[RMDB]
RNA sequence: GGGAACGACUCGAGUAGAGUCGAAAACGAGGGGUGGGCGAAAGUUGCCAUGCGACCGUAACUUUCGUAGUCAUUGAUAAAGGGGCAGGUCUCGCUCUUUUGUCAUUGCGGUUGCCUAGAGGCAUGGAAAACCAUGACAGGUUCGCCUGUCAUGGAACUACUUGAAGCGGUUCGCCGCUUCAAGUAGAAAAGAAACAACAACAACAAC
Reactivity to 2A3 in 0.01 (KOAc 150mM, MgCl2 10mM, bicine 150mM(pH8.5), 24C), signal-to-noise 1, nucleotides 027 to 156: c080g030a080g050g040g030g040u240g020g020g000c040g030a050a050a000g070u020u070g020c040c020a080u140g010c000g040a020c000c030g000u020a010a020c010u050u170u110c080g000u020a010g100u050c030a060u050u080g030a000u010a000a000a000g000g000g000g010c010a010g060g240u030c090u120c190g010c000u020c000u000u040u020u010g000u000c010a010u010u050g000c000g000g010u020u040g000c020c010u140a150g010a120g060g000c040a030u090g020g030a040a110a000a010c010c000a000u000g000a000c010a020g060g020u030u090c160g060c060c010u000g000u010c000a000u000g020g010a000a000
An RNA of 207 nucleotides, treated with 2A3 and read out base by base.